[RMDB]
RNA sequence: GGGAACGACUCGAGUAGAGUCGAAAAGAAGCUACGAAAAAUCUCAGAGUAGGCGAAACUCUCUCGACGCCGAAAAGAGAAAAAUGAGAUGAACGUGUGUACGAAGUGCACACGGAAAAGUAGCGAAGGGUUCUUACAAGUUCGCUUGUAAGAACCCAAAAGAAACAACAACAACAAC
Reactivity to 2A3 in 0.01 (KOAc 150mM, MgCl2 10mM, bicine 150mM(pH8.5), 24C), signal-to-noise 1, nucleotides 027 to 126: g080a000a030g000c000u010a010c010g010a000a010a000a040a090u010c000u000c000a000g000a000g000u020a030g000g000c000g020a190a070a040c030u040c020u010c050u050c120g030a030c030g080c000c000g000a000a000a000a000g090a000g000a000a000a000a000a000u130g020a020g010a080u100g000a000a000c000g000u030g010u010g010u010a010c050g300a300a020g000u000g000c000a000c000a000c000g010g000a000a000a000a000g000u000a000g000c010g000a050a000
Reactivity to DMS in 0.01 (KOAc 150mM, MgCl2 10mM, bicine 150mM(pH8.5), 24C), signal-to-noise 1, nucleotides 027 to 126: g000a090a190g000c000u000a000c020g010a030a040a110a110a000u000c000u000c000a000g000a060g030u010a100g010g000c020g000a150a080a060c040u010c050u000c000u000c020g000a300c060g000c010c050g000a120a070a080a250g010a030g000a000a120a020a000a000u010g030a050g030a120u020g020a160a140c000g010u000g010u020g000u000a000c020g040a110a130g050u000g000c000a000c000a000c000g000g010a030a070a140a150g000u000a000g000c010g000a030a110